[RMDB]
RNA sequence: GGGAACGACUCGAGUAGAGUCGAAAAUAUGUUGACACAGAUCGCCAUCUCAGCGCUAUUAAGACUUGCUGCAAUCUUCUUCUAUAUGCCUCAAAGCAAAGCAAACUAGAGCCAUAUGGAGGAGCAGAGCCGUAGGAUACUUCGGUAUCCUACGGCUAAAAGAAACAACAACAACAAC
Reactivity to DMS in 0.01 (KOAc 150mM, MgCl2 10mM, bicine 150mM(pH8.5), 24C), signal-to-noise 1, nucleotides 027 to 126: u000a110u000g030u000u000g000a210c130a110c100a080g050a050u010c100g050c000c010a120u050c050u000c050a190g000c060g050c060u000a100u000u000a110a070g020a130c090u000u000g000c110u000g000c030a060a080u000c050u010u000c000u000u010c060u000a010u000a030u000g000c300c000u000c030a120a020a110g020c040a050a110a250g030c300a030a110a130c010u010a200g000a030g000c080c020a030u010a010u000g050g000a000g000g000a030g050c240a110g000
The record gives the reactivity of an RNA of 177 nucleotides to DMS.
The data come from the RNA Mapping Database (RMDB), library OK2TST.